The data come from the RNA Mapping Database (RMDB), library OK3TST. The record gives the reactivity of an RNA of 207 nucleotides to 2A3. 2A3 adducts were read by reverse transcription with SuperScript II with manganese.
RNA sequence: GGGAACGACUCGAGUAGAGUCGAAAAACAAACACUAGAACUAGAAACUUUGUUCAUACAUCUACGUAGGCAUGUUAAUUUGUCUUCAUGCUGCUAAAGACAUACCCAAGACUGGGAAGAAAAAGAGGUUUAAUUGGACUUACAGUUCUACAUGGCACCCUGAUGCUCAUUUCGAUGAGCAUCAGGGAAAAGAAACAACAACAACAAC
Reactivity to 2A3 in 0.01 (KOAc 150mM, MgCl2 10mM, bicine 150mM(pH8.5), 24C), signal-to-noise 1, nucleotides 027 to 156: a010c040a000a140a000c060a010c060u080a040g000a040a020c060u050a020g190a050a110a040c030u110u090u140g000u010u020c050a060u070a090c010a120u000c010u070a080c040g060u010a100g040g050c010a000u000g050u060u090a110a070u230u170u300g040u040c000u020u010c010a000u020g000c000u000g020c010u010a060a060a060g030a000c000a040u070a130c000c000c000a120a130g130a080c200u120g000g000g010a060a090g060a000a090a050a020a000g030a020g000g140u080u210u050a070a100u110u110g000g000a000c000u040u010a020c140a000g000u000u070c010u030a050c010a090u060g040g020c000a000